RNA sequence: GGGAACGACUCGAGUAGAGUCGAAAACGCAGUUGCGCCCCGGCCAGCAGCGGAUCGUCGAUGCCGCUCUCGGCGCGCAUGCCGGCAGCGAAGAACGGCACCAUCAGGUGCAUCACCUGCUCGGUGACCGACCUACGGUAUUCGUACCGUAGGUCGGAAAAGAAACAACAACAACAAC
Reactivity to DMS in 0.01 (KOAc 150mM, MgCl2 10mM, bicine 150mM(pH8.5), 24C), signal-to-noise 1, nucleotides 027 to 126: c090g010c080a110g090u010u000g010c020g000c020c040c000c010g000g000c090c070a040g020c190a030g000c060g020g020a040u000c070g040u010c160g000a090u000g000c010c000g020c010u000c060u000c040g060g010c170g040c110g010c130a030u000g030c060c010g000g000c050a040g010c110g020a140a070g000a000a140c110g000g010c000a000c000c020a220u010c070a090g030g030u010g050c140a100u000c030a120c090c000u000g000c050u010c020g020g010u000g020a170
Reactivity to 2A3 in 0.01 (KOAc 150mM, MgCl2 10mM, bicine 150mM(pH8.5), 24C), signal-to-noise 1, nucleotides 027 to 126: c010g020c040a100g130u250u200g000c030g000c000c000c000c000g050g080c120c110a070g070c080a010g010c030g030g060a070u050c050g230u160c140g300a040u260g200c010c010g020c000u000c000u060c020g020g020c040g000c040g000c040a010u100g000c000c000g040g000c000a000g000c030g100a150a050g030a140a080c070g050g000c000a000c000c000a070u250c140a060g020g000u010g000c000a010u070c000a010c000c000u020g000c050u100c080g020g060u040g020a090
Structure probing data (DMS and 2A3) for a 177-nucleotide construct. 2A3 adducts were read by reverse transcription with SuperScript II with manganese. Reactivities are given for positions 27 through 126. The data come from the RNA Mapping Database (RMDB), library OK2TRN. The RNA was probed in 150 mM KOAc, 10 mM MgCl2 and 150 mM bicine (pH 8.5) at 24 C.